Structure probing data (DMS and 2A3) for a 177-nucleotide construct. Conditions: 150 mM KOAc, 10 mM MgCl2 and 150 mM bicine (pH 8.5), 24 C. The DMS profile rests on 4,473 reads. Source: RMDB library OK2TRN, as collected in RNAgym.

[RMDB]
RNA sequence: GGGAACGACUCGAGUAGAGUCGAAAAGAGGCAAUGUCAGUAAAUAUGGAAUAUGACGUGUUUCGCCAGAAUAAGGUGGCCAAUAUGUACCGCCAUGCCUUAGUUAAAGAGAUAUCCACAAUCAAGACCCUUCAGUUAAGUUCGCUUAACUGAAGGGAAAAGAAACAACAACAACAAC
Reactivity to DMS in 0.01 (KOAc 150mM, MgCl2 10mM, bicine 150mM(pH8.5), 24C), signal-to-noise 5, nucleotides 027 to 126: g000a040g020g010c000a050a060u000g010u000c010a030g000u010a040a080a080u000a060u010g010g000a100a180u010a110u020g020a060c070g030u000g010u000u000u000c050g010c030c020a090g010a130a090u030a100a090g020g020u000g010g010c050c110a050a080u010a050u010g010u000a030c060c070g000c070c010a040u000g020c020c010u010u010a030g000u010u000a070a120a120g000a120g010a090u010a050u000c020c020a060c130a070a070u000c090a080a110g010a280
Reactivity to 2A3 in 0.01 (KOAc 150mM, MgCl2 10mM, bicine 150mM(pH8.5), 24C), signal-to-noise 5, nucleotides 027 to 126: g020a010g000g000c040a080a140u070g000u020c030a010g040u180a050a130a110u290a120u230g140g040a130a050u150a060u170g050a030c030g070u040g040u030u040u050c050g000c000c010a020g110a050a080u160a070a010g020g000u030g010g000c010c020a050a020u160a090u240g080u050a060c000c040g000c000c000a020u090g030c000c010u060u020a060g040u060u130a150a110a010g130a010g010a030u060a050u050c020c010a060c040a090a080u060c030a020a030g040a110